[RMDB]
RNA sequence: GGGAACGACUCGAGUAGAGUCGAAAAGGAAAGCUCUCUUGCGUCAGAAUUCUUAUCACCACUAAUCUAGAGAUGAGUGUUCCAAGAUUCAGGAAGAUCAGUUGAUCGAUCUAGAGAGGAUCGACCGCAGGUACUCGCUGUUCGCAGCGAGUACCUGAAAAGAAACAACAACAACAAC
Reactivity to DMS in 0.01 (KOAc 150mM, MgCl2 10mM, bicine 150mM(pH8.5), 24C), signal-to-noise 1, nucleotides 027 to 126: g010g040a140a100a090g010c080u000c060u010c030u000u000g000c120g020u000c050a050g000a010a060u000u010c020u000u000a150u020c060a050c090c040a140c050u000a030a120u000c030u000a030g000a070g000a040u000g000a050g000u000g000u090u000c020c100a080a170g000a000u030u010c000a070g030g000a080a030g070a000u000c030a090g060u080u030g020a160u000c050g020a000u010c030u030a100g000a170g000a050g000g000a060u000c000g000a190c150c000g000
Reactivity to 2A3 in 0.01 (KOAc 150mM, MgCl2 10mM, bicine 150mM(pH8.5), 24C), signal-to-noise 3, nucleotides 027 to 126: g140g040a150a010a050g050c000u000c000u000c000u010u060g010c010g050u010c010a050g030a070a070u050u010c000u020u000a030u020c020a050c120c010a070c110u040a070a030u040c040u110a060g020a030g010a180u070g050a050g070u130g040u110u000c000c020a040a050g020a020u070u030c030a000g060g040a060a050g020a090u030c040a030g040u090u090g160a190u040c030g010a010u000c000u010a050g010a000g010a010g180g050a040u040c040g020a000c040c010g000
The data come from the RNA Mapping Database (RMDB), library OK1LIB. An RNA of 177 nucleotides, treated with DMS and 2A3 and read out base by base. The reactions ran in a buffer of 150 mM KOAc, 10 mM MgCl2 and 150 mM bicine (pH 8.5), at 24 C.